The record gives the reactivity of an RNA of 177 nucleotides to 2A3 and DMS. The RNA was probed in 150 mM KOAc, 10 mM MgCl2 and 150 mM bicine (pH 8.5) at 24 C.
RNA sequence: GGGAACGACUCGAGUAGAGUCGAAAAAUGCGAAUGUAGUAGCCGUUUACUAUGAGACUAGGCAUUAUAAUUGAAUAUCAUAGUAUAAAUUGCCAUGAGAGUAGAAGCUUCAGUUUAUGAAGACUUCCAGGUCUAAACUUUUCGAAGUUUAGACCUGAAAAGAAACAACAACAACAAC
Reactivity to 2A3 in 0.01 (KOAc 150mM, MgCl2 10mM, bicine 150mM(pH8.5), 24C), signal-to-noise 5, nucleotides 027 to 126: a000u120g000c030g070a080a010u150g080u180a090g050u070a010g070c000c010g010u030u030u020a000c000u000a000u040g000a020g030a040c110u120a060g040g080c040a040u090u150a090u120a080a130u080u160g070a030a030u030a030u060c000a000u020a000g020u010a000u050a020a050a050u130u060g080c050c010a040u080g030a040g000a010g100u180a020g020a000a000g000c020u000u000c000a060g070u150u140u120a130u130g000a000a000g010a040c000u000u000c000
Reactivity to DMS in 0.01 (KOAc 150mM, MgCl2 10mM, bicine 150mM(pH8.5), 24C), signal-to-noise 6, nucleotides 027 to 126: a080u000g040c020g010a090a080u020g010u000a060g010u010a090g010c030c090g020u020u000u000a020c000u000a000u010g000a060g000a050c060u010a160g000g000c060a060u010u070a090u030a170a160u020u010g000a100a150u010a060u000c000a020u000a010g010u000a050u010a040a060a070u020u000g010c020c030a070u000g000a090g010a090g010u030a070g000a020a010g000c000u000u000c000a020g000u020u030u050a070u030g000a020a010g000a070c010u000u000c020

Record summary:
It was measured as part of the RMDB libraries RFM100 and RFMREP.